The record gives the reactivity of an RNA of 207 nucleotides to DMS and 2A3. In probing experiments dimethyl sulfate is read out at A N1 and C N3, which are open when not base-paired. The data come from the RNA Mapping Database (RMDB), library M2RFPK. The RNA was probed in 150 mM KOAc, 10 mM MgCl2 and 150 mM bicine (pH 8.5) at 24 C. For DMS the reverse transcriptase was MarathonRT. For 2A3 the reverse transcriptase was SuperScript II with manganese. Reactivities are given for positions 27 through 156.
RNA sequence: GGGAACGACUCGAGUAGAGUCGAAAACUCUUAUCGAGAGCGGCAGAGGGACUGGCCCGAUGAAGCCCGGCAACCUAACUUUAAUUAAGCGUAAAGUGAAGGUGCUAAUUCCAGCAAAAUGGUGUAUAAACGACCGUUAACUUCGGUUAACGGUCAACCGUAUUGUAAAGUUCGCUUUACAAUACGGAAAAGAAACAACAACAACAAC
Reactivity to DMS in 0.01 (KOAc 150mM, MgCl2 10mM, bicine 150mM(pH8.5), 24C), signal-to-noise 3, nucleotides 027 to 156: c000u000c010u000u000a250u010c070g000a070g030a070g030c070g010g040c020a080g010a150g040g020g000a120c060u000g030g010c000c020c000g040a120u000g010a150a100g000c010c010c050g000g000c010a050a030c000c000u000a110a020c000u000u020u000a030a100u000u010a070a200g030c250g000u010a030a030a030g010u000g020a080a040g000g010u000g000c000u010a060a090u000u000c010c030a070g010c080a050a080a100a190u010g000g000u000g040u000a120u010a090a100a140c120g010a010c010c010g010u000u010a010a040c000u010u010c300g050g020u000u000a000a010c000g030g010u000c010a010a020
Reactivity to 2A3 in 0.01 (KOAc 150mM, MgCl2 10mM, bicine 150mM(pH8.5), 24C), signal-to-noise 4, nucleotides 027 to 156: c000u010c010u050u080a120u140c070g010a020g010a030g110c150g010g000c020a010g010a010g010g000g010a010c010u010g040g020c000c000c000g060a090u030g000a010a010g000c000c010c010g000g000c020a070a070c000c000u010a000a010c010u060u030u060a050a090u200u170a160a060g150c070g080u050a020a010a010g000u020g100a130a010g000g000u000g000c000u010a020a030u090u010c010c010a010g050c110a020a020a020a150u150g050g020u110g070u060a090u160a110a210a040c160g000a000c000c000g000u000u000a000a000c010u050u070c100g060g000u000u010a000a000c000g010g000u000c000a000a000